Chemical mapping of a 177-nucleotide RNA with DMS and 2A3. Values cover nucleotides 27 to 126. 2A3 adducts were read by reverse transcription with SuperScript II with manganese. The RNA was probed in 150 mM KOAc, 10 mM MgCl2 and 150 mM bicine (pH 8.5) at 24 C. In probing experiments dimethyl sulfate is read out at A N1 and C N3, which are open when not base-paired. Source: RMDB library OK2TRN, as collected in RNAgym.
RNA sequence: GGGAACGACUCGAGUAGAGUCGAAAAGCUGCCUCUGACGUCCUUCUCCCCCGGAAACGGGGCCGAAGGGUGGUAAGGCGGGUCGCCUGGCGCUGGCACGGGUAUGCGUGGCGGUCGACCCUGGCCGCGUCGAUUAAUAUUUCGAUAUUAAUCGACGAAAAGAAACAACAACAACAAC
Reactivity to DMS in 0.01 (KOAc 150mM, MgCl2 10mM, bicine 150mM(pH8.5), 24C), signal-to-noise 9, nucleotides 027 to 126: g000c030u000g010c010c010u000c090u000g010a130c090g010u000c000c000u000u000c000u000c300c000c000c000c000g010g000a070a070a190c010g020g000g010g030c040c060g000a010a010g010g010g020u000g000g000u000a100a040g010g010c010g000g000g010u000c070g010c020c010u000g010g010c040g010c030u000g010g000c030a050c050g010g000g010u010a060u010g010c040g020u000g000g010c030g010g000u000c020g010a090c030c010c060u000g010g010c010c070g000
Reactivity to 2A3 in 0.01 (KOAc 150mM, MgCl2 10mM, bicine 150mM(pH8.5), 24C), signal-to-noise 9, nucleotides 027 to 126: g030c010u030g030c010c010u060c270u300g110a040c010g020u020c000c000u010u000c010u040c000c010c000c000c000g000g000a010a010a010c010g000g000g000g000c000c010g000a000a000g010g000g000u020g010g050u060a030a020g010g010c020g020g000g010u070c030g010c010c020u030g060g000c030g000c040u070g100g010c050a050c110g100g020g080u260a080u260g050c040g010u030g050g090c020g000g010u070c030g100a140c000c000c020u030g060g010c020c020g040